RNA sequence: GGGAACGACUCGAGUAGAGUCGAAAAAAGAUAUGGAUGUAAGGGAGCUCGUAAGAUACGUUGAAACGGUUUCGGAAACGAAACCGUGGAGUAUCAAGAAGAGCGAAGAACUUACAUCCUAAGUCAAGAUCUAGUUACAGUUCGCUGUAACUAGAUCAAAAGAAACAACAACAACAAC
Reactivity to DMS in 0.01 (KOAc 150mM, MgCl2 10mM, bicine 150mM(pH8.5), 24C), signal-to-noise 4, nucleotides 027 to 126: a090a090g000a040u000a300u010g010g010a010u010g010u000a010a030g010g000g000a130g030c000u000c000g000u020a150a250g000a010u000a000c000g010u020u010g020a160a230a010c000g010g010u000u000u000c000g020g000a100a100a110c000g010a000a000a010c000c000g000u000g000g000a070g010u000a000u000c000a030a070g000a130a180g000a010g020c000g020a090a140g000a120a130c010u000u000a020c000a000u000c000c000u000a010a100g000u000c030a120a140
Reactivity to 2A3 in 0.01 (KOAc 150mM, MgCl2 10mM, bicine 150mM(pH8.5), 24C), signal-to-noise 1, nucleotides 027 to 126: a000a010g070a040u070a040u130g010g000a000u000g000u010a010a010g030g000g010a030g010c000u010c010g010u040a060a000g010a000u010a010c040g090u300u060g050a020a020a010c020g000g020u010u000u000c000g010g010a050a060a050c000g000a000a000a000c000c000g010u000g000g000a000g000u000a000u000c000a020a000g040a010a010g010a000g000c010g090a070a010g020a000a000c000u000u000a000c000a000u000c000c000u020a100a040g020u010c050a050a050